Structure probing data (DMS and 2A3) for a 207-nucleotide construct. Conditions: 150 mM KOAc, 10 mM MgCl2 and 150 mM bicine (pH 8.5), 24 C. Source: RMDB library OK3TST, as collected in RNAgym. For DMS the reverse transcriptase was MarathonRT. For 2A3, 8,899 sequencing reads were counted.
[RMDB]
RNA sequence: GGGAACGACUCGAGUAGAGUCGAAAAGCAUAUGUGCGGAAGCAUAUGUGCGACCAUAUGCGAAAGCGUGUGGGAGGUAAGUACGUCGAAUGCGGGGACGUACCGUAGCACGAGUAGGGGCAAACGCCGCUAAGCGUGCGACGAAGGGGCCGCGACGACAUACAUUUAUCUUCGGGUAAAUGUGUGUAAAAGAAACAACAACAACAAC
Reactivity to DMS in 0.01 (KOAc 150mM, MgCl2 10mM, bicine 150mM(pH8.5), 24C), signal-to-noise 4, nucleotides 027 to 156: g020c010a010u000a000u000g060u000g000c000g040g030a210a290g010c000a010u000a020u000g020u010g030c030g010a060c020c000a020u000a010u000g010c000g020a160a100a180g030c010g060u010g030u000g010g000g010a130g010g020u010a060a080g000u000a010c000g010u000c020g020a060a090u010g010c040g010g000g020g020a030c000g010u000a000c020c010g030u000a070g000c010a040c020g000a040g030u010a030g010g020g050g020c020a090a140a210c300g020c000c030g030c010u000a010a030g020c000g020u000g000c010g010a000c010g020a110a150g010g000g010g010c000c010g010c020g010a190c070g030
Reactivity to 2A3 in 0.01 (KOAc 150mM, MgCl2 10mM, bicine 150mM(pH8.5), 24C), signal-to-noise 6, nucleotides 027 to 156: g000c000a000u010a000u010g030u010g030c030g150g150a090a020g000c010a000u020a010u010g020u010g000c010g010a010c010c000a010u010a000u050g010c010g050a110a020a030g010c020g010u020g010u020g010g040g010a100g070g060u100a070a040g010u010a000c000g000u010c030g080a240a050u140g000c000g000g010g000g000a000c010g000u000a010c000c000g020u000a010g000c000a000c000g000a010g030u010a010g030g050g010g000c010a190a240a190c200g000c010c020g070c240u000a010a010g030c000g000u000g000c010g000a000c000g010a030a040g030g000g030g030c000c000g000c010g010a050c060g030